[RMDB]
Chemical mapping of a 177-nucleotide RNA with DMS and 2A3.
Values cover nucleotides 27 to 126.
For 2A3, 1,310 sequencing reads were counted.
The reactions ran in a buffer of 150 mM KOAc, 10 mM MgCl2 and 150 mM bicine (pH 8.5), at 24 C.
Source: RMDB library M2PK50, as collected in RNAgym.
RNA sequence: GGGAACGACUCGAGUAGAGUCGAAAAGCUCGGCCUUUCGAGGCCGAGCAGACGCCGUUUGCCAAGGCUAUAGGCUAAAUUAAAACACAAGCUGAAACACAACUGCUGAACAUUUCGAUGUUCAGAACACAAGUCUACCUUUCGAGGUAGACUUGUGAAAAGAAACAACAACAACAAC
Reactivity to DMS in 0.01 (KOAc 150mM, MgCl2 10mM, bicine 150mM(pH8.5), 24C), signal-to-noise 2, nucleotides 027 to 126: g030c020u000c020g010g040c000c000u000u000u000c080g000a000g010g020c000c020g060a000g040c000a020g030a130c250g010c020c020g020u010u000u010g000c010c010a140a120g000g000c020u020a090u000a070g010g000c010u000a030a100a080u010u000a070a080a150a100c060a060c070a080a040g000c020u000g000a120a080a060c080a030c070a070a030c130u020g010c010u000g000a030a010c030a030u000u010u040c120g010a000u000g000u000u000c000a010g000a090a110
Reactivity to 2A3 in 0.01 (KOAc 150mM, MgCl2 10mM, bicine 150mM(pH8.5), 24C), signal-to-noise 2, nucleotides 027 to 126: g000c000u000c000g000g020c000c030u170u130u160c200g050a000g010g030c000c040g000a000g000c000a000g000a000c050g000c000c000g060u070u070u090g040c010c020a030a020g010g010c030u060a080u090a090g020g010c000u010a040a060a280u160u200a110a090a100a010c090a020c010a050a000g030c000u020g050a030a140a010c090a000c030a030a180c060u130g000c010u010g030a000a000c010a000u060u090u170c170g080a000u000g010u000u000c020a000g000a030a000